[RMDB]
This 177-nucleotide RNA was probed chemically with DMS and 2A3.
RNA sequence: GGGAACGACUCGAGUAGAGUCGAAAAUCUCGCUGUUCUGAUUCUGUAAUAAUCAGGACAGGCUAAACAUUUGCUAUAUUAAGACCAUGCAUGUGUUCCCAGAUCUAGUUCUUGCCUUACGUCUGGUCACUGGUCCUAUUUUCGAAUAGGACCAGUGAAAAGAAACAACAACAACAAC
Reactivity to DMS in 0.01 (KOAc 150mM, MgCl2 10mM, bicine 150mM(pH8.5), 24C), signal-to-noise 2, nucleotides 027 to 126: u010c030u000c030g030c000u000g010u010u010c000u000g000a020u000u000c140u020g030u010a130a070u040a010a000u000c000a020g000g000a000c000a010g000g030c120u030a030a060a090c150a050u000u000u030g020c050u000a090u020a070u050u000a050a090g030a070c210c040a020u010g010c040a020u000g000u000g000u000u000c010c000c030a070g000a070u010c080u000a030g010u000u020c020u010u020g010c100c020u010u000a090c190g000u000c010u010g000g010u000
Reactivity to 2A3 in 0.01 (KOAc 150mM, MgCl2 10mM, bicine 150mM(pH8.5), 24C), signal-to-noise 6, nucleotides 027 to 126: u000c000u000c010g020c010u000g000u000u000c000u000g000a000u040u000c030u080g130u080a100a170u110a130a000u100c000a000g000g000a000c010a010g000g020c030u110a110a110a040c040a080u050u080u100g040c030u110a070u050a070u280u120a160a030g040a060c010c030a040u080g000c000a020u060g010u020g030u090u050c010c000c010a010g010a040u030c040u040a030g050u070u050c030u060u070g060c020c020u040u050a040c040g030u010c030u050g030g010u020
The data come from the RNA Mapping Database (RMDB), libraries RFM100 and RFMREP. The RNA was probed in 150 mM KOAc, 10 mM MgCl2 and 150 mM bicine (pH 8.5) at 24 C.